[RMDB]
RNA sequence: GGGAACGACUCGAGUAGAGUCGAAAAAGGUGUAAAUAACCCUGUGUAAGUCGCAGGAUUUGAGCGUGGUGUACGCCCAAUCGGACUUUGGUUAAUAUCGAUCACUUUAUCAAAAUGUGCAAGCCCACGCUAAGGAAUCGUUCGCGAUUCCUUAGCGAAAAGAAACAACAACAACAAC
Reactivity to DMS in 0.01 (KOAc 150mM, MgCl2 10mM, bicine 150mM(pH8.5), 24C), signal-to-noise 2, nucleotides 027 to 126: a000g010g020u010g000u000a070a070a120u000a010a050c080c000c230u000g030u000g010u000a080a020g030u000c020g010c040a020g040g010a050u000u000u020g010a040g000c050g050u010g020g020u020g020u000a020c040g000c000c010c020a020a060u000c050g010g010a040c040u000u010u000g010g000u000u020a070a080u040a080u020c100g000a090u010c030a010c030u000u000u000a070u000c140a060a060a070a050u000g020u010g030c120a080a150g010c000c010c020a120
Reactivity to 2A3 in 0.01 (KOAc 150mM, MgCl2 10mM, bicine 150mM(pH8.5), 24C), signal-to-noise 2, nucleotides 027 to 126: a040g080g000u070g000u040a080a170a040u040a000a080c000c000c020u020g070u050g090u210a090a050g030u060c060g070c250a040g110g070a090u030u030u140g040a070g000c000g030u040g080g180u120g080u210a030c000g010c020c000c020a020a020u010c000g070g010a010c000u080u070u090g000g000u020u110a110a050u090a100u160c110g050a010u140c000a010c050u000u080u090a100u120c030a090a080a140a170u140g090u080g040c020a090a030g000c020c020c000a020